[RMDB]
RNA sequence: GGGAACGACUCGAGUAGAGUCGAAAACAACACUGGAUUUGGUCUGUUGGCCUCCACGCGUAUUGCGACAGAAGAUUUGGAAAACCUACAGCGCUCGAUUGUCCUUUCUCAUGCAGCAGGUGUUGGGCCAUCGGUUACUUUUCGAAGUAACCGAUGGAAAAGAAACAACAACAACAAC
Reactivity to DMS in 0.01 (KOAc 150mM, MgCl2 10mM, bicine 150mM(pH8.5), 24C), signal-to-noise 2, nucleotides 027 to 126: c040a050a090c090a070c060u000g010g040a110u000u000u000g010g010u000c030u020g000u000u010g000g020c080c010u000c060c050a090c090g000c060g030u000a060u020u000g010c050g000a080c110a050g020a130a070g010a110u000u020u010g020g000a100a040a060a130c030c020u010a080c070a080g000c080g020c030u000c040g000a110u010u000g020u000c020c020u000u000u000c000u000c070a080u000g010c070a050g000c070a060g020g010u000g010u000u000g000g000g000
Reactivity to 2A3 in 0.01 (KOAc 150mM, MgCl2 10mM, bicine 150mM(pH8.5), 24C), signal-to-noise 2, nucleotides 027 to 126: c010a010a010c030a010c060u050g030g020a110u090u170u170g000g030u000c040u040g140u140u170g020g000c000c000u000c020c020a020c020g060c000g000u140a190u170u300g000c050g060a020c040a030g130a060a030g060a170u080u100u160g040g020a050a050a040a060c020c000u020a060c060a060g050c030g030c060u010c050g090a090u030u100g010u000c000c000u020u160u000c020u020c020a040u150g000c020a040g010c020a010g030g100u030g030u010u040g010g040g020